[RMDB]
RNA sequence: GGGAACGACUCGAGUAGAGUCGAAAAGCCAAUGCUGGAGAUUGUCGAUGCGCGCCUUGACGCCGUUGAUGUUCCAUGUAGCGAUUUUCAUUCCAUAAUGAUUAUGCGCUCGUGCGGGGCAGGGCAAACUACGAGUCCAGUUCGCUGGACUCGUAGUAAAAGAAACAACAACAACAAC
Reactivity to DMS in 0.01 (KOAc 150mM, MgCl2 10mM, bicine 150mM(pH8.5), 24C), signal-to-noise 2, nucleotides 027 to 126: g030c000c040a080a110u000g030c030u020g010g000a100g010a090u010u000g030u010c030g010a030u010g010c200g040c040g000c010c170u010u000g010a120c100g000c020c030g020u000u000g000a040u000g010u010u000c020c010a060u010g010u020a010g020c020g000a050u000u000u000u000c000a010u000u010c260c300a140u010a030a010u000g010a010u010u000a010u010g000c030g010c020u000c050g010u000g010c040g010g010g040g020c040a050g020g010g000c070a070a090
Reactivity to 2A3 in 0.01 (KOAc 150mM, MgCl2 10mM, bicine 150mM(pH8.5), 24C), signal-to-noise 2, nucleotides 027 to 126: g060c010c010a030a120u140g000c030u060g050g000a080g020a170u240u060g060u020c000g020a010u050g040c040g010c000g000c190c080u110u130g030a160c060g010c020c000g000u040u040g030a060u060g080u080u000c000c000a040u140g130u170a000g000c010g020a010u000u010u020u020c000a010u080u000c180c080a100u240a220a020u020g040a020u000u030a030u170g130c020g000c000u000c020g030u040g040c030g070g060g000g000c010a000g020g020g000c040a040a120